Structure probing data (2A3 and DMS) for a 177-nucleotide construct. Conditions: 150 mM KOAc, 10 mM MgCl2 and 150 mM bicine (pH 8.5), 24 C. For 2A3 the reverse transcriptase was SuperScript II with manganese. The 2A3 profile rests on 988 reads.
RNA sequence: GGGAACGACUCGAGUAGAGUCGAAAAUACAUUGGAAUACACUCACUCUGGGCAGUGCUUUCCUAUCUAUCUGGACAGUGCAUUGGGAGGAACUGGAUCAGGCGAAUGCUAUUAACUCCUUCAAUUGCUAUGGUGGCAUGUUCGCAUGCCACCAUAGAAAAGAAACAACAACAACAAC
Reactivity to 2A3 in 0.01 (KOAc 150mM, MgCl2 10mM, bicine 150mM(pH8.5), 24C), signal-to-noise 1, nucleotides 027 to 126: u060a010c060a040u020u110g100g020a030a000u070a050c020a000c030u040c000a040c050u150c100u090g030g080g000c060a000g000u000g010c060u020u000u000c000c000u000a040u000c020u010a050u000c020u000g070g050a050c060a010g000u010g120c010a070u120u100g040g000g000a020g000g010a020a020c020u020g030g020a170u050c030a010g050g000c070g070a040a010u100g000c010u010a020u080u100a160a090c020u000c030c040u060u090c090a140a210u050u160g030
Reactivity to DMS in 0.01 (KOAc 150mM, MgCl2 10mM, bicine 150mM(pH8.5), 24C), signal-to-noise 1, nucleotides 027 to 126: u000a050c120a080u020u000g000g020a010a010u000a120c030a060c000u000c050a060c050u000c070u000g020g040g000c120a010g000u000g020c030u000u000u000c000c020u000a050u020c080u000a090u000c020u000g000g010a100c110a040g000u000g020c210a070u000u020g020g020g010a050g020g040a070a050c080u010g020g000a070u030c070a070g020g010c070g020a030a070u000g000c110u000a040u000u000a060a140c140u000c000c010u000u020c110a100a120u020u000g000